[RMDB]
RNA sequence: GGGAACGACUCGAGUAGAGUCGAAAAGGUGAACUGGACGGGAAGUAGCUCCAGCGACUGCUUCCGAAGCUUUGAUAAGAGCAACUCCAUCUACGUUGCUCAAGUAGGUGGUAGCAGCAAACACCGACAUAAUGGGUACUUUCGAGUACCCAUUAUGAAAAGAAACAACAACAACAAC
Reactivity to 2A3 in 0.01 (KOAc 150mM, MgCl2 10mM, bicine 150mM(pH8.5), 24C), signal-to-noise 9, nucleotides 027 to 126: g030g010u020g010a090a030c040u050g020g070a030c030g060g010g040a090a030g030u080a010g020c050u030c030c040a040g030c040g080a080c000u000g000c000u020u010c000c000g010a050a010g010c020u080u100u150g190a180u210a200a100g010a000g020c020a030a020c010u040c040c020a080u020c040u060a030c060g080u080u130g060c050u060c090a040a020g010u020a010g010g060u100g020g010u030a010g000c010a000g000c000a010a060a010c010a000c000c010g010a010
Reactivity to DMS in 0.01 (KOAc 150mM, MgCl2 10mM, bicine 150mM(pH8.5), 24C), signal-to-noise 9, nucleotides 027 to 126: g000g020u010g010a160a140c030u000g000g010a100c070g020g010g020a070a080g020u040a060g010c090u000c020c040a050g010c110g010a300c010u000g000c000u010u000c010c010g000a300a200g010c010u000u010u030g000a130u050a100a120g000a000g000c020a030a090c040u020c130c100a090u020c110u010a050c110g010u010u000g010c060u010c050a030a040g010u000a020g000g020u020g000g000u000a040g000c010a020g000c060a100a070a140c030a020c000c000g000a290